[RMDB]
Structure probing data (DMS and 2A3) for a 207-nucleotide construct. For 2A3, 771 sequencing reads were counted. The reactions ran in a buffer of 150 mM KOAc, 10 mM MgCl2 and 150 mM bicine (pH 8.5), at 24 C. For 2A3 the reverse transcriptase was SuperScript II with manganese.

RNA sequence: GGGAACGACUCGAGUAGAGUCGAAAAAUAAUAUUAUCAAAAGACAUGAUAAUAUUAAAGAUAAAGCGCUGACUAUGAACGAAAUAGCUAUAUGGUUCGCUCAAGAAUAUAGUCUUGUUAAACGUGGAAACGAUAACUGUAUUUUUAAUCACGUCAGUAUACUGAUUUUAUUCGUAAAAUCAGUAUAAAAAGAAACAACAACAACAAC
Reactivity to DMS in 0.01 (KOAc 150mM, MgCl2 10mM, bicine 150mM(pH8.5), 24C), signal-to-noise 1, nucleotides 027 to 156: a140u000a000a040u020a000u010u000a010u020c000a010a040a150a300g000a300c050a080u000g000a080u000a000a020u000a000u000u010a040a010a250g000a290u000a080a090a220g000c040g000c040u010g000a050c010u000a080u000g040a010a020c000g010a050a050a060u000a120g010c080u000a060u010a070u000g040g000u000u000c040g000c050u010c030a020a060g000a030a030u000a050u000a010g000u010c020u000u000g000u020u000a090a050a050c030g000u030g040g000a260a090a060c030g000a080u000a000a050c000u000g000u000a010u000u010u000u000u030a050a180u010c020a090c080g010u000c000a030g060
Reactivity to 2A3 in 0.01 (KOAc 150mM, MgCl2 10mM, bicine 150mM(pH8.5), 24C), signal-to-noise 1, nucleotides 027 to 156: a000u030a010a000u010a000u030u000a000u000c000a000a090a070a300g080a130c010a010u020g000a000u000a000a000u000a000u010u030a120a120a000g040a080u100a220a160a010g140c070g000c080u010g000a020c020u030a090u220g040a030a000c060g000a010a050a050u080a070g020c100u050a030u020a020u190g180g000u020u110c060g000c030u020c030a050a000g010a140a000u080a000u030a030g030u030c000u030u150g040u010u100a100a140a070c030g000u040g100g140a140a070a000c010g040a080u020a110a100c000u020g010u080a140u010u070u030u050u030a110a100u070c040a010c060g030u000c000a000g000